This 177-nucleotide RNA was probed chemically with DMS and 2A3. For DMS the reverse transcriptase was MarathonRT. Reactivities are given for positions 27 through 126. It was measured as part of the RMDB libraries RFM100 and RFMREP. The RNA was probed in 150 mM KOAc, 10 mM MgCl2 and 150 mM bicine (pH 8.5) at 24 C.
RNA sequence: GGGAACGACUCGAGUAGAGUCGAAAAGGAAGAAACUUCCUCGACCUAUUCUCAAACUUUAAAUCUGUAAGACCUGCAGGUUUCUUAAUUGAACUUGUGGAUGUGAAUAUCAAGUUGCUAGUGGGCCUAUGGUCCCAGUAUUCGUACUGGGACCAUAAAAAGAAACAACAACAACAAC
Reactivity to DMS in 0.01 (KOAc 150mM, MgCl2 10mM, bicine 150mM(pH8.5), 24C), signal-to-noise 3, nucleotides 027 to 126: g000g000a040a040g020a150a170a090c090u010u020c020c010u000c100g010a120c020c030u010a060u000u000c030u010c080a090a110a110c120u010u020u030a030a100a150u010c150u010g000u020a090a040g050a080c140c020u010g000c020a030g000g000u010u010u020c040u000u020a050a060u030u070g010a040a030c020u000u000g040u000g000g010a070u020g010u020g000a030a030u020a070u030c110a060a060g000u000u000g000c050u000a060g000u010g020g000g010c110c060
Reactivity to 2A3 in 0.01 (KOAc 150mM, MgCl2 10mM, bicine 150mM(pH8.5), 24C), signal-to-noise 3, nucleotides 027 to 126: g060g000a040a090g000a070a170a030c080u040u000c000c000u000c000g030a040c000c020u010a040u130u010c040u030c030a090a100a120c020u170u180u260a060a050a070u040c010u020g120u090a080a060g050a070c020c000u000g000c000a030g000g060u000u120u030c000u040u190a130a140u140u040g030a040a020c000u010u000g060u050g110g040a110u050g070u030g110a040a020u150a060u210c020a030a020g010u000u050g060c000u050a010g050u120g000g000g000c000c000